The record gives the reactivity of an RNA of 177 nucleotides to DMS and 2A3. It was measured as part of the RMDB library TTRDEL. The RNA was probed in 150 mM KOAc, 10 mM MgCl2 and 150 mM bicine (pH 8.5) at 24 C. In probing experiments dimethyl sulfate is read out at A N1 and C N3, which are open when not base-paired.
[RMDB]
RNA sequence: GGGAACGACUCGAGUAGAGUCGAAAAGAUAUGGAUCUAUAGACAGUGAGAACUUGGACCUCGGAAACGAGCUAGUUCAUCACCGAAGAUCCUAAGUCAAACCAGAUCUACUUCGGUAGAUCUGGAAUCGUUGUGGAGAGUUCGCUCUCCACAACGAAAAAGAAACAACAACAACAAC
Reactivity to DMS in 0.01 (KOAc 150mM, MgCl2 10mM, bicine 150mM(pH8.5), 24C), signal-to-noise 2, nucleotides 027 to 126: g000a040u000a300u050g000g000a000u040c010u000a180u020a260g000a240c300a100g000u000g000a070g010a000a000c010u010u000g040g000a240c300c000u000c000g000g000a040a060a100c010g000a010g030c040u000a010g000u000u000c020a250u000c000a000c000c010g000a170a040g000a010u000c000c000u000a040a090g010u000c000a120a140a200c000c000a000g000a000u000c000u000a000c000u020u000c180g000g030u000a010g010a000u000c000u000g000g000a000a030
Reactivity to 2A3 in 0.01 (KOAc 150mM, MgCl2 10mM, bicine 150mM(pH8.5), 24C), signal-to-noise 1, nucleotides 027 to 126: g040a000u050a050u110g010g010a030u090c040u010a220u190a230g140a110c140a030g040u020g030a060g000a040a010c030u090u060g080g190a300c050c020u000c010g060g050a010a080a000c010g000a000g000c000u010a000g010u000u030c070a190u040c000a300c000c020g020a000a010g000a000u010c000c000u000a120a030g060u000c050a090a060a050c030c000a020g010a000u040c000u000a000c010u070u100c300g100g010u030a010g000a010u030c000u000g010g130a000a070